[RMDB]
RNA sequence: GGGAACGACUCGAGUAGAGUCGAAAAAUGAGAGGCGUGCUGAGAACACCUUUGGGAAGGCCGCCGAUUCCUGAGAAGAACAUGGCGGCAGAGCAGAUGGCCUCACCCUGCCUCUGGAAAUUGCAGUGUGUGUCUGUGAGAACUGAAAGGGUGUGGAGAUUAAAUUUAAUUUCGAUUAAAUUUAAUCAAAAGAAACAACAACAACAAC
Reactivity to 2A3 in 0.01 (KOAc 150mM, MgCl2 10mM, bicine 150mM(pH8.5), 24C), signal-to-noise 3, nucleotides 027 to 156: a010u140g020a040g010a020g050g020c020g030u070g020c070u050g050a020g040a120a020c020a070c030c030u070u100u100g070g010g010a050a030g120g010c020c000g010c010c010g000a090u000u030c000c020u090g070a100g050a190a000g010a020a010c040a110u220g010g020c000g000g000c020a010g020a020g070c000a010g010a160u160g050g010c020c000u020c000a020c000c000c000u050g020c010c020u040c010u030g030g010a090a120a100u090u120g000c020a020g000u000g020u040g000u030g030u110c010u030g030u050g020a070g020a060a050c060u060g030a120a030a040g020g000g000u010g020u050g010g020a120
Reactivity to DMS in 0.01 (KOAc 150mM, MgCl2 10mM, bicine 150mM(pH8.5), 24C), signal-to-noise 2, nucleotides 027 to 156: a100u010g000a110g020a060g030g010c020g020u010g020c060u000g030a150g010a110a040c040a070c010c030u000u000u000g000g030g010a140a130g020g030c010c000g040c010c010g030a050u000u000c020c000u000g020a280g010a120a080g010a040a030c040a090u000g040g010c040g010g030c010a020g010a240g030c030a060g010a070u000g030g000c030c000u000c020a050c010c020c000u000g030c000c020u000c020u000g010g000a040a060a110u000u010g000c060a070g020u020g010u010g010u000g020u000c020u010g050u000g010a100g010a090a080c050u010g000a140a060a090g010g020g020u010g000u010g020g000a280